[RMDB]
An RNA of 177 nucleotides, treated with DMS and 2A3 and read out base by base. The data come from the RNA Mapping Database (RMDB), libraries RFM100 and RFMREP. High DMS reactivity at an A or C suggests that its Watson-Crick edge is free. Conditions: 150 mM KOAc, 10 mM MgCl2 and 150 mM bicine (pH 8.5), 24 C.
RNA sequence: GGGAACGACUCGAGUAGAGUCGAAAAAUGGAUUGGGUUCAGUUCUGGUCUCACACGGUUUGUUCUAACAAUUUGUACUGACUGUGUUUUGAUCGAUACGGGUCGCUCUCACCUAGGCCAGAGUUGCCCCUUAGUGUAGAUUCGUCUACACUAAGGGAAAAGAAACAACAACAACAAC
Reactivity to DMS in 0.01 (KOAc 150mM, MgCl2 10mM, bicine 150mM(pH8.5), 24C), signal-to-noise 9, nucleotides 027 to 126: a080u020g000g010a050u010u010g000g010g010u010u020c120a070g010u000u010c030u010g010g010u000c010u010c210a070c020a020c020g010g010u000u000u010g010u000u000c050u010a100a130c260a090a150u020u010u020g000u000a040c020u000g000a020c020u000g010u000g010u000u000u000u000g000a070u000c050g010a100u010a080c050g000g000g010u000c020g010c030u000c000u000c020a110c090c080u000a060g010g010c010c030a070g010a090g010u010u010g010c190
Reactivity to 2A3 in 0.01 (KOAc 150mM, MgCl2 10mM, bicine 150mM(pH8.5), 24C), signal-to-noise 9, nucleotides 027 to 126: a010u170g050g020a040u070u100g070g020g040u110u180c060a040g020u080u010c050u050g010g000u000c010u000c010a010c000a000c010g010g030u020u020u020g040u060u030c050u090a170a110c100a210a250u120u120u230g040u060a030c000u020g010a010c010u000g010u000g060u050u060u080u110g070a070u080c040g000a010u030a130c020g020g020g020u020c010g000c020u000c000u010c000a060c000c030u040a030g040g000c010c020a020g010a010g060u050u050g040c000